[RMDB]
RNA sequence: GGGAACGACUCGAGUAGAGUCGAAAACAAUGAUGAGCAAUCCGCUAUUGCCGCCUAAAAACGGUUAGCCGGGGCUGCUAGAGCCUUGUUACCAAAGAUAGCCGGCGGGGACUUCGGUCCCCGUCGUUGAAGGGCUGUACGUUCGCGUACAGCCCAACGAUAUAGAAACGUUCGCGUUUCUAUAUCGAAAAGAAACAACAACAACAAC
Reactivity to 2A3 in 0.01 (KOAc 150mM, MgCl2 10mM, bicine 150mM(pH8.5), 24C), signal-to-noise 3, nucleotides 027 to 156: c020a020a090u140g040a030u090g010a040g070c010a020a060u030c020c040g000c020u030a030u050u180g030c000c010g000c010c000u060a030a020a020a010a000c000g000g000u020u020a000g030c070c050g010g000g000g030c040u040g020c010u020a020g020a020g090c000c020u010u030g020u040u100a090c030c020a030a020a000g040a100u040a020g050c010c010g000g010c000g000g000g000g000a000c000u030u040c240g040g000u010c030c070c000c000g000u000c000g000u000u020g020a010a010g000g010g010c010u000g000u000a000c000g010u020u060c220g000c010g090u000a000c000a000g000c000c000c000a000a000
Reactivity to DMS in 0.01 (KOAc 150mM, MgCl2 10mM, bicine 150mM(pH8.5), 24C), signal-to-noise 2, nucleotides 027 to 156: c040a130a070u020g000a100u010g000a060g010c010a090a070u000c010c040g040c010u000a050u000u000g040c000c000g070c000c040u000a110a130a110a090a060c000g040g000u000u000a030g000c030c050g060g050g020g020c040u000g020c040u000a110g010a140g010c000c030u000u000g010u000u000a120c040c050a020a060a110g010a210u000a110g000c090c050g030g020c020g010g010g030g050a020c020u020u010c300g070g020u010c000c000c000c010g000u010c000g030u000u020g000a130a150g010g080g010c000u010g020u000a010c000g030u000u010c300g000c020g030u010a000c010a010g000c000c000c000a000a010